[RMDB]
RNA sequence: GGGAACGACUCGAGUAGAGUCGAAAAAAAAGAUAUGGAACAGGAUAAGCUGCUUUCCCGAAGAACAACGUUCGGAAACGAACGUUGGGAGGGAAAGAACUACAGCGUAACUGUUCCUAAGUCAAAACUUAUGUAUAUUGUUCGCAAUAUACAUAAGAAAAGAAACAACAACAACAAC
Reactivity to DMS in 0.01 (KOAc 150mM, MgCl2 10mM, bicine 150mM(pH8.5), 24C), signal-to-noise 6, nucleotides 027 to 126: a060a050a100a100g010a020u000a030u010g000g000a010a020c010a010g000g010a110u000a100a190g020c000u000g000c000u000u000u000c000c000c010g000a080a130g010a150a200c000a000a000c000g010u000u000c000g010g010a010a010a020c000g010a010a000c000g010u000u000g000g000g010a020g010g000g000a010a000a010g000a030a020c080u020a300c010a010g010c000g010u000a110a150c000u000g000u000u000c000c000u000a000a050g000u000c000a090a060a080a140
Reactivity to 2A3 in 0.01 (KOAc 150mM, MgCl2 10mM, bicine 150mM(pH8.5), 24C), signal-to-noise 4, nucleotides 027 to 126: a000a000a000a030g010a010u020a020u050g000g000a010a000c000a010g080g000a140u030a120a020g020c000u020g000c010u010u010u000c000c000c020g210a300a010g000a000a010c010a000a010c000g000u000u000c000g000g010a000a020a010c000g010a000a000c000g000u000u000g000g010g000a040g000g000g000a000a000a010g000a000a000c040u230a040c020a010g010c000g010u010a030a010c000u000g000u000u000c000c000u000a010a000g010u010c010a000a030a090a190
This 177-nucleotide RNA was probed chemically with DMS and 2A3. Reactivities are given for positions 27 through 126. Values are in units of 0.01, from 0 to 300, in steps of 10. DMS adducts were read by reverse transcription with MarathonRT. Conditions: 150 mM KOAc, 10 mM MgCl2 and 150 mM bicine (pH 8.5), 24 C. The 2A3 profile rests on 26,144 reads. It was measured as part of the RMDB library TTRDES.